[RMDB]
RNA sequence: GGGAACGACUCGAGUAGAGUCGAAAAGUCGCCAUCGUGAGAUGGCGACAGCGUCAUCUUCGGAUGACGCACGUUCUCUUCGGAGAACGAGAAGCCGUACGCGGCUUCAAAAAAAAAUAAAAAAAGCAAAGCAUUCACGUUCGCGUGAAUGCAGGUGGAGCUUCGGCUCCACCAGUAACUCUACGGAGUUACACGUCCAUUCUACGGAAUGGACGAGUGCGACUUCGGUCGCACAACAGGCUAGGACCGGCCUGAUAAAGGUCCGAAGUGAGUGAUUCGUCACUCACAAAAGAAACAACAACAACAAC
Reactivity to 2A3 in 0.01 (KOAc 150mM, MgCl2 10mM, bicine 150mM(pH8.5), 24C), signal-to-noise 2, nucleotides 027 to 266: g000u010c000g000c000c000a040u000c010g000u020g140a180g000a040u000g000g000c000g000a010c000a000g020c010g010u000c000a000u000c000u020u100c150g120g000a000u000g000a000c000g000c000a000c000g010u010u000c000u000c000u000u020c110g120g000a010g000a020a020c010g010a020g000a050a000g010c000c000g020u060a030c300g020c050g140g000c000u010u020c040a030a000a000a000a000a010a010a040a020u270a110a040a020a000a010a020a010g170c140a170a140a040g030c000a030u020u030c000a000c000g050u070u110c250g040c010g130u020g000a000a000u020g000c020a000g000g010u020g000g000a000g010c000u060u080c150g120g000c000u010c000c000a010c020c000a010g000u010a000a000c010u010c020u020a050c300g070g000a000g000u000u010a010c090a020c030g000u020c010c000a000u010u000c020u030a060c250g110g010a000a000u000g010g020a000c010g000a010g000u000g000c010g020a000c010u040u070c210g110g010u000c020g000c020a010c010a020a030c030a030g000g010c000u070a060g000g000a000c020c010g000g000c000c000u020g020a020u190a050a150a010g000g000u010c000c000g010a120a010